An RNA of 177 nucleotides, treated with 2A3 and DMS and read out base by base.
2A3 adducts were read by reverse transcription with SuperScript II with manganese.
RNA sequence: GGGAACGACUCGAGUAGAGUCGAAAAGAUAUGGACCAUACCGAGCAUCGAUCUGUAAGGGUCGGAAACGACCCACAGGGAGCUCAGUAUGGUCCUAAGUCAAAACGGAAGGGUUCGCCCUUCCGAAGUAAGGUGGAAUCUUCGGAUUCCACCUUACAAAAGAAACAACAACAACAAC
Reactivity to 2A3 in 0.01 (KOAc 150mM, MgCl2 10mM, bicine 150mM(pH8.5), 24C), signal-to-noise 1, nucleotides 027 to 126: g000a000u040a000u060g000g000a020c010c020a000u000a000c030c010g000a000g030c020a090u300c010g020a010u000c000u000g050u070a300a300g000g000g010u000c000g020g000a000a030a000c000g000a010c000c000c010a000c000a000g000g000g000a010g010c000u010c000a010g000u000a000u000g000g010u020c000c000u000a010a010g000u010c000a010a010a040a050c000g000g030a000a000g050g050g020u140u270c300g170c000c000c050u000u000c010c000g020a050a020
Reactivity to DMS in 0.01 (KOAc 150mM, MgCl2 10mM, bicine 150mM(pH8.5), 24C), signal-to-noise 1, nucleotides 027 to 126: g000a030u000a080u030g010g000a010c010c000a030u000a000c000c010g040a030g030c000a300u000c250g000a010u010c000u000g000u000a250a170g010g000g000u010c000g020g020a000a000a070c020g040a010c000c000c000a020c010a000g040g020g000a020g020c000u000c000a020g030u000a000u000g000g000u000c000c000u000a000a110g000u000c010a140a070a100a290c040g020g020a000a010g010g000g000u000u010c290g010c000c010c010u000u000c000c000g020a010a060